[RMDB]
RNA sequence: GGGAACGACUCGAGUAGAGUCGAAAAUAGCGUACUCUGAAUGGCCGGCUUAAUACACCGGGUAGGGUUAUAAUGCGAAGUAUGUUACAAUAGGCAACCUGCAGCCAACUUCUACAUUGUAGGAUGCUGUUCACAGAUCAAAUGGCAGUGGGUGCAUCGUCUUGAUAGACUUCGGUCUAUCAAGACGAAAAGAAACAACAACAACAAC
Reactivity to 2A3 in 0.01 (KOAc 150mM, MgCl2 10mM, bicine 150mM(pH8.5), 24C), signal-to-noise 1, nucleotides 027 to 156: u070a020g120c020g000u080a040c000u030c110u060g160a190a030u070g150g020c040c000g000g020c010u000u010a010a000u030a110c000a000c000c000g030g020g000u020a010g010g030g000u000u080a030u040a140a020u130g070c040g000a000a070g100u010a040u130g090u050u080a020c030a250a020u130a130g060g020c040a060a090c000c000u080g030c000a000g020c030c000a030a110c080u210u080c030u060a060c030a230u120u140g000u020a060g010g020a090u070g060c030u060g010u120u160c100a140c090a300g030a010u080c010a020a020a020u000g000g040c020a000g010u030g000g000g000u010g030c000a050u020
Chemical mapping of a 207-nucleotide RNA with 2A3. Values are in units of 0.01, from 0 to 300, in steps of 10. 2A3 is a SHAPE reagent: it acylates the 2'-hydroxyl of flexible nucleotides of all four kinds. Conditions: 150 mM KOAc, 10 mM MgCl2 and 150 mM bicine (pH 8.5), 24 C. The 2A3 profile rests on 382 reads.